[RMDB]
RNA sequence: GGGAACGACUCGAGUAGAGUCGAAAAUCGGCAUUCGUGCCGAGAUUACGGGGUCACAAGAGGCAUCGGAGGCGACGAUCCUGAAGCCUCCACGGGGGAGCCUCCAUGCUACCCACCUUGUGACGGAGGCACCCUAGCAUCCAUGUUCGCAUGGAAAACGCGUUAUGAAAUUCGUUUCAUAACGCGUAAAAGAAACAACAACAACAAC
Reactivity to DMS in 0.01 (KOAc 150mM, MgCl2 10mM, bicine 150mM(pH8.5), 24C), signal-to-noise 1, nucleotides 027 to 156: u000c000g040g000c000a090u000u010c230g040u000g000c040c000g000a000g020a060u020u020a050c100g010g000g050g000u020c030a090c040a020a050g000a160g000g000c020a040u000c120g020g000a050g000g040c010g020a080c110g030a100u000c000c000u010g000a080a250g020c040c000u000c000c000a060c030g070g000g030g020g010a190g000c040c000u000c020c020a110u000g020c040u000a030c000c040c070a300c060c000u000u020g010u030g010a110c000g020g020a110g000g020c050a170c030c060c000u000a100g000c000a110u000c000c010a060u000g000u010u000c260g030c030a130u000g020g010a040a000a080
Reactivity to 2A3 in 0.01 (KOAc 150mM, MgCl2 10mM, bicine 150mM(pH8.5), 24C), signal-to-noise 2, nucleotides 027 to 156: u020c000g000g000c010a020u040u100c220g130u070g000c000c000g000a000g000a000u050u070a060c080g070g000g010g000u020c000a000c000a020a020g020a020g030g020c010a000u060c300g010g020a020g000g000c000g040a170c000g010a100u010c000c020u080g050a120a050g030c030c030u010c030c010a000c010g000g000g000g000g000a010g000c000c000u000c000c000a020u000g000c000u040a090c080c100c040a040c020c020u000u010g000u010g010a000c020g020g020a010g000g020c020a050c010c000c020u040a050g060c050a070u000c000c000a000u010g050u070u140c300g040c120a000u040g010g000a000a240a000

Source information:
The record gives the reactivity of an RNA of 207 nucleotides to DMS and 2A3. Conditions: 150 mM KOAc, 10 mM MgCl2 and 150 mM bicine (pH 8.5), 24 C.